[RMDB]
RNA sequence: GGGAACGACUCGAGUAGAGUCGAAAAGAUAUGGAUCCCAUGACAUGAGCAAACCAUCGGAAACGAUGGGUAGCUCAACAGCAUGGGAGUCCUAAGUCAAACUUGCUAGACUUCGGUCUAGCAAGAACCAUAGAGCAUGGUUCGCCAUGCUCUAUGGAAAAGAAACAACAACAACAAC
Reactivity to 2A3 in 0.01 (KOAc 150mM, MgCl2 10mM, bicine 150mM(pH8.5), 24C), signal-to-noise 5, nucleotides 027 to 126: g030a020u060a040u120g000g010a000u000c000c010c000a000u010g030a060c020a060u090g010a010g010c020a200a300a050c010c000a000u010c000g040g010a070a040a030c020g010a000u000g010g010g000u010a000g000c000u000c000a010a000c020a000g050c000a000u000g000g010g030a010g090u070c000c000u030a090a010g070u030c040a020a080a160c010u000u000g000c000u000a000g000a020c000u050u060c300g110g000u000c010u000a000g010c000a000a000g000a000a010
Reactivity to DMS in 0.01 (KOAc 150mM, MgCl2 10mM, bicine 150mM(pH8.5), 24C), signal-to-noise 7, nucleotides 027 to 126: g010a060u000a300u000g000g020a300u000c000c000c000a000u000g000a020c070a270u000g020a020g010c010a010a300a300c010c000a000u000c000g000g020a110a090a180c000g020a000u000g000g000g000u000a220g010c000u000c010a020a060c270a150g000c000a020u000g000g010g010a010g010u000c000c000u000a050a070g010u000c040a100a070a210c010u000u000g000c000u000a010g000a020c000u000u000c190g030g000u000c000u000a000g010c000a000a010g000a070a160